[RMDB]
RNA sequence: GGGAACGACUCGAGUAGAGUCGAAAAGGGGUCAUGCUUCCCACAGCUACCCACCUGUGUUUGUCAGCUCUGAAGCCUCCACGGAGCUUGGAUUUAACACAGAGGCUGUGCAGCAUGACGGAGGCACCCAAAACGUGGUUAGUUCGCUAACCACGAAGAUCUCCUAGAGGUUCGCCUCUAGGAGAUCAAAAGAAACAACAACAACAAC
Reactivity to 2A3 in 0.01 (KOAc 150mM, MgCl2 10mM, bicine 150mM(pH8.5), 24C), signal-to-noise 2, nucleotides 027 to 156: g090g010g030g000u000c000a000u000g000c000u050u050c000c000c020a000c000a000g030c010u060a100c050c060c030a060c020c010u010g020u000g030u020u020u050g050u020c020a010g000c000u000c000u000g150a220a050g060c040c040u100c020c010a030c060g000g000a000g000c060u000u030g030g020a040u160u140u300a040a000c000a000c000a000g010a000g000g020c000u000g000u010g010c040a000g000c000a020u000g000a000c000g000g000a010g000g010c020a050c000c020c000a040a140a040a070c000g010u000g000g020u000u010a000g040u010u040c190g030c130u000a000a000c000c000a020c000g000a000a010